Chemical mapping of a 177-nucleotide RNA with DMS and 2A3.

RNA sequence: GGGAACGACUCGAGUAGAGUCGAAAAGAUAUGGACCGUGAUUAGACAUGAAAGCCGGUCGGAAACGACCGACUUUCAACAGCUAAUACGGUCCUAAGUCAAACACUUGGGGUUCGCCCCAAGUGAACAAACGAAAUAUGUUCGCAUAUUUCGUUUGAAAAGAAACAACAACAACAAC
Reactivity to DMS in 0.01 (KOAc 150mM, MgCl2 10mM, bicine 150mM(pH8.5), 24C), signal-to-noise 6, nucleotides 027 to 126: g000a020u000a080u010g000g000a010c000c000g010u000g010a030u000u000a010g000a030c090a170u020g000a020a010a010g030c010c000g020g020u010c000g010g000a020a020a040c000g010a010c000c000g010a000c010u000u000u000c000a050a050c170a240g010c000u000a010a010u000a000c000g010g010u000c000c000u000a000a050g000u000c010a210a170a300c010a000c000u000u000g010g000g010g010u000u020c300g010c000c000c000c000a000a010g000u000g000a060a170
Reactivity to 2A3 in 0.01 (KOAc 150mM, MgCl2 10mM, bicine 150mM(pH8.5), 24C), signal-to-noise 3, nucleotides 027 to 126: g000a010u020a010u030g000g000a010c010c000g000u020g050a060u010u010a010g050a070c300a300u300g000a010a000a000g000c010c010g000g000u000c000g000g000a010a020a000c000g000a000c020c000g010a000c000u010u000u000c000a000a020c060a020g010c000u020a010a000u000a000c000g010g000u000c000c000u000a010a000g000u000c010a020a080a020c010a000c000u010u000g000g000g000g060u140u100c290g220c010c000c020c000a000a000g000u010g000a020a040

The reactions ran in a buffer of 150 mM KOAc, 10 mM MgCl2 and 150 mM bicine (pH 8.5), at 24 C.